[RMDB]
RNA sequence: GGGAACGACUCGAGUAGAGUCGAAAAGACCAUUCAUGGCAAGCUGGAUGCUAUUGACGCAUGGAGUAUUCGCUCCCGUGCUGCCAGCCUGCUGCACGGCCUCGGUUUCAGCAAUGAACAACUGGAACAUAUGCGUGAGCUUCGGCUCACGCAUAUGAAAAGAAACAACAACAACAAC
Reactivity to DMS in 0.01 (KOAc 150mM, MgCl2 10mM, bicine 150mM(pH8.5), 24C), signal-to-noise 2, nucleotides 027 to 126: g000a180c010c020a110u010u010c080a110u000g010g030c010a050a010g010c020u000g000g010a160u000g000c100u000a300u010u010g010a090c110g010c030a010u000g040g010a040g000u000a130u020u010c220g000c010u000c050c000c050g000u000g000c100u000g000c000c020a060g000c030c050u000g000c000u010g000c190a060c100g010g010c000c030u010c070g000g000u010u000u000c020a010g000c170a050a120u000g000a050a070c250a070a070c050u000g010g020a060a100
Reactivity to 2A3 in 0.01 (KOAc 150mM, MgCl2 10mM, bicine 150mM(pH8.5), 24C), signal-to-noise 2, nucleotides 027 to 126: g010a000c020c010a010u090u110c100a080u210g030g000c010a010a020g010c010u030g000g020a000u030g080c070u160a130u180u220g100a030c080g000c030a030u080g030g000a030g000u090a270u210u300c160g040c020u050c000c000c050g060u090g020c020u030g000c000c000a000g010c000c010u040g030c000u010g010c010a010c130g080g000c040c030u060c080g030g000u010u050u020c010a030g030c060a070a190u170g030a040a080c020a100a070c020u020g020g040a040a040